[RMDB]
RNA sequence: GGGAACGACUCGAGUAGAGUCGAAAAGAAUGAUAUGGACGGUACUCCCCACCCGUCGUACUCUUUGAUCGCUACUCGGAAACGAGUAGCGGGAGAGUGCCGCGGAGGUACCGUCCUAAGUCUGCAGCAACUGUGUAGUCUUCGGACUACACAGUUGAAAAGAAACAACAACAACAAC
Reactivity to 2A3 in 0.01 (KOAc 150mM, MgCl2 10mM, bicine 150mM(pH8.5), 24C), signal-to-noise 2, nucleotides 027 to 126: g080a090a140u210g000a030u010a030u070g010g000a000c010g000g000u000a000c000u070c050c010c010c000a020c000c020c000g020u010c010g000u020a000c000u090c050u300u300u060g030a010u050c000g000c010u010a000c000u000c000g020g000a000a020a010c000g000a000g020u000a000g000c050g010g000g010a120g000a010g000u010g000c010c020g000c010g010g000a000g000g000u000a000c000c000g010u000c000c000u000a000a000g010u000c020u070g120c090a140g000
Reactivity to DMS in 0.01 (KOAc 150mM, MgCl2 10mM, bicine 150mM(pH8.5), 24C), signal-to-noise 4, nucleotides 027 to 126: g020a180a080u010g010a030u000a150u000g010g000a030c000g010g010u010a010c010u010c050c010c000c030a300c080c000c020g000u010c300g000u000a010c000u000c000u000u010u010g010a130u000c000g000c000u000a010c000u000c010g000g000a020a030a070c000g000a010g010u000a010g000c000g000g000g000a010g000a020g010u000g010c000c080g040c000g000g000a100g020g000u010a020c000c010g000u010c000c000u010a000a070g000u000c000u000g000c150a200g010